[RMDB]
RNA sequence: GGGAACGACUCGAGUAGAGUCGAAAACGAUGGCGACACCGCGCGCCGUCAGAUCGCGGAUCACCUUGAACAGAACCUCGACUUCCGAAGCACUGAGCGCCGAAGUCGGCUCAUCCAUGAUGAGAAAAUACGUGGUACGUUUCGACGUACCACGUAUAAAAGAAACAACAACAACAAC
Reactivity to DMS in 0.01 (KOAc 150mM, MgCl2 10mM, bicine 150mM(pH8.5), 24C), signal-to-noise 2, nucleotides 027 to 126: c140g020a140u000g000g000c000g010a030c080a160c110c160g010c030g000c010g000c000c030g030u000c090a110g010a100u000c040g010c050g000g010a180u000c010a030c060c000u000u010g030a090a070c110a140g000a090a090c050c050u000c060g010a050c000u000u000c020c040g020a110a180g010c010a110c250u010g000a140g030c040g000c100c080g000a010a040g020u000c000g000g010c010u000c000a060u000c010c100a170u000g000a030u000g010a040g000a060a080a060
Reactivity to 2A3 in 0.01 (KOAc 150mM, MgCl2 10mM, bicine 150mM(pH8.5), 24C), signal-to-noise 2, nucleotides 027 to 126: c050g050a040u080g000g000c000g030a020c060a070c270c100g050c000g010c020g000c060c000g000u000c000a000g020a090u050c040g000c020g170g020a030u040c000a010c030c030u050u110g070a070a050c040a080g060a070a010c020c020u020c000g030a020c000u010u000c000c040g030a080a010g030c010a040c230u300g090a050g030c010g000c030c020g000a000a000g040u020c000g010g000c000u010c010a000u000c110c050a150u170g010a000u000g010a040g000a000a100a000
Annotation
The data come from the RNA Mapping Database (RMDB), library OK2TST. An RNA of 177 nucleotides, treated with DMS and 2A3 and read out base by base. Reactivities are given for positions 27 through 126. DMS adducts were read by reverse transcription with MarathonRT. For 2A3, 1,739 sequencing reads were counted.